Record summary
Conditions: 150 mM KOAc, 10 mM MgCl2 and 150 mM bicine (pH 8.5), 24 C. Chemical mapping of a 177-nucleotide RNA with 2A3 and DMS.
RNA sequence: GGGAACGACUCGAGUAGAGUCGAAAACAAGUCUGGUGAAGCGAAAGUGGAACUGCGAACGGCUCAGUAGAACGGUGAUUAUUUAAUCGUGUAGGAAGGAUAACCGCGGGAAACUGUGGCUAAUAACCCCAAACAGACUUUUCGAAGUCUGUUUGGGAAAAGAAACAACAACAACAAC
Reactivity to 2A3 in 0.01 (KOAc 150mM, MgCl2 10mM, bicine 150mM(pH8.5), 24C), signal-to-noise 3, nucleotides 027 to 126: c050a020a040g100u040c050u120g040g060u040g040a060a030g000c020g020a100a010a000g040u030g000g050a040a020c020u020g000c100g080a080a000c000g030g000c020u020c030a020g030u060a000g030a070a020c010g020g090u030g040a070u020u090a080u090u140u130a090a050u070c050g010u030g050u130a010g030g120a070a030g020g010a020u040a090a010c010c010g010c010g030g000g000a000a030a000c010u010g000u040g040g000c000u020a030a030u050a100a080c000
Reactivity to DMS in 0.01 (KOAc 150mM, MgCl2 10mM, bicine 150mM(pH8.5), 24C), signal-to-noise 3, nucleotides 027 to 126: c040a090a050g040u000c030u000g040g040u010g000a210a110g000c070g000a030a030a100g030u000g030g000a100a040c070u000g020c050g040a090a070c110g000g000c020u000c020a080g020u010a070g000a150a070c050g000g000u040g030a070u010u000a150u000u030u030a040a140u010c040g000u020g040u040a110g030g010a080a050g010g000a050u020a060a050c060c010g000c010g000g000g010a110a050a120c020u000g000u000g010g010c080u000a060a090u030a100a100c250